[RMDB]
RNA sequence: GGGAACGACUCGAGUAGAGUCGAAAAGCUCAAGGCCAAGCAGUUAACCCCCUUGUGUGCCAACCAUGCAGCUUGCAAACCCGGAGACCCUGCUAGAUUUAGGCAGCACAGCAGAAGGGCUGUAAAACACAUGAGUAGCUUUCGAGCUACUCAUGUGAAAAGAAACAACAACAACAAC
Reactivity to DMS in 0.01 (KOAc 150mM, MgCl2 10mM, bicine 150mM(pH8.5), 24C), signal-to-noise 2, nucleotides 027 to 126: g040c010u010c030a060a070g010g020c050c020a110a110g020c060a100g000u000u020a100a250c030c020c010c020c060u000u000g020u000g010u000g000c050c030a130a060c090c050a070u010g000c080a080g010c020u010u010g010c100a070a070a130c010c050c010g020g010a120g020a090c080c060c000u010g000c020u000a110g000a130u000u010u000a080g000g020c020a030g010c070a060c080a080g000c050a070g000a160a160g010g000g000c020u000g010u000a050a080a070a130
The data come from the RNA Mapping Database (RMDB), library OK2TST.
This 177-nucleotide RNA was probed chemically with DMS.
Values are in units of 0.01, from 0 to 300, in steps of 10.